[RMDB]
RNA sequence: GGGAACGACUCGAGUAGAGUCGAAAAAGAGGCUAUUACGAUAGCCUCAGGUGCCGCAGGGCUCGUCAUGGGGUAGCUAGCGUGUGAUUAACAGCCAGCUGCCUUUUGAAGGGCUAUAUGGCAUUAACAACUUCGACUAAUUCGUUAGUCGAAGUUGAAAAGAAACAACAACAACAAC
Reactivity to 2A3 in 0.01 (KOAc 150mM, MgCl2 10mM, bicine 150mM(pH8.5), 24C), signal-to-noise 5, nucleotides 027 to 126: a010g010a000g010g000c000u000a010u020u090a080c280g080a040u000a010g000c000c000u000c000a000g000g010u010g000c000c000g020c090a070g080g030g060c010u000c010g020u000c000a020u030g010g010g010g010u000a000g000c000u000a010g000c160g160u070g020u030g120a300u150u270a100a020c010a000g000c010c010a000g000c000u000g000c000c000u000u000u000u000g000a010a000g000g000g000c000u020a020u010a010u130g000g000c000a000u050u120a080a010
Reactivity to DMS in 0.01 (KOAc 150mM, MgCl2 10mM, bicine 150mM(pH8.5), 24C), signal-to-noise 3, nucleotides 027 to 126: a080g030a010g010g010c000u000a000u000u020a090c210g010a050u010a000g020c000c010u010c000a010g000g010u000g000c000c010g010c180a140g000g000g010c000u000c000g010u000c010a020u000g000g010g000g010u000a010g000c010u000a050g010c010g000u020g010u000g000a230u030u050a120a030c030a100g020c000c030a000g010c010u000g000c000c000u000u010u000u010g000a030a030g010g000g000c000u000a040u010a060u010g000g000c000a010u000u000a090a190
This 177-nucleotide RNA was probed chemically with 2A3 and DMS. Reactivities are given for positions 27 through 126. Conditions: 150 mM KOAc, 10 mM MgCl2 and 150 mM bicine (pH 8.5), 24 C.